[RMDB]
RNA sequence: GGGAACGACUCGAGUAGAGUCGAAAAUGUGAAAAAAGGCGUCGGGGGCGGUCCCCUCGACGGCGCGCAUCAGGUUCUCGAGGAGAAUGGGGAAGCGCCUGGUCACCUCCCCCAGCCACGCGCGUUGCGAGAUACUAGCGUUCGCGCUAGUAUCUCGAAAAGAAACAACAACAACAAC
Reactivity to 2A3 in 0.01 (KOAc 150mM, MgCl2 10mM, bicine 150mM(pH8.5), 24C), signal-to-noise 2, nucleotides 027 to 126: u110g000u060g180a070a180a020a000a040a080g120g010c050g000u120c040g080g000g000g010g000c070g000g000u150c050c040c000c000u020c000g000a020c030g010g000c000g000c000g000c030a120u120c040a040g120g030u140u050c000u020c060g130a090g050g070a040g040a070a070u160g040g000g000g070a020a090g000c000g040c030c040u040g050g010u030c020a030c010c010u000c010c020c000c000c000a010g010c040c010a000c010g050c000g000c010g050u020u040g060
Reactivity to DMS in 0.01 (KOAc 150mM, MgCl2 10mM, bicine 150mM(pH8.5), 24C), signal-to-noise 1, nucleotides 027 to 126: u040g020u030g020a010a060a200a070a180a300g000g040c040g010u040c090g020g040g000g000g000c100g000g000u010c120c010c000c010u010c020g010a100c110g000g010c020g000c050g000c020a040u000c210a100g000g010u000u000c000u000c030g040a250g000g020a120g000a020a030u000g020g000g000g010a080a210g000c070g050c020c020u010g000g000u000c150a150c060c000u000c050c000c000c000c030a220g050c070c140a140c080g020c010g000c070g020u010u020g000
Chemical mapping of a 177-nucleotide RNA with 2A3 and DMS. Source: RMDB library OK1LIB, as collected in RNAgym. High 2A3 reactivity points to a flexible backbone, as in loops and unpaired stretches. 2A3 adducts were read by reverse transcription with SuperScript II with manganese. The reactions ran in a buffer of 150 mM KOAc, 10 mM MgCl2 and 150 mM bicine (pH 8.5), at 24 C.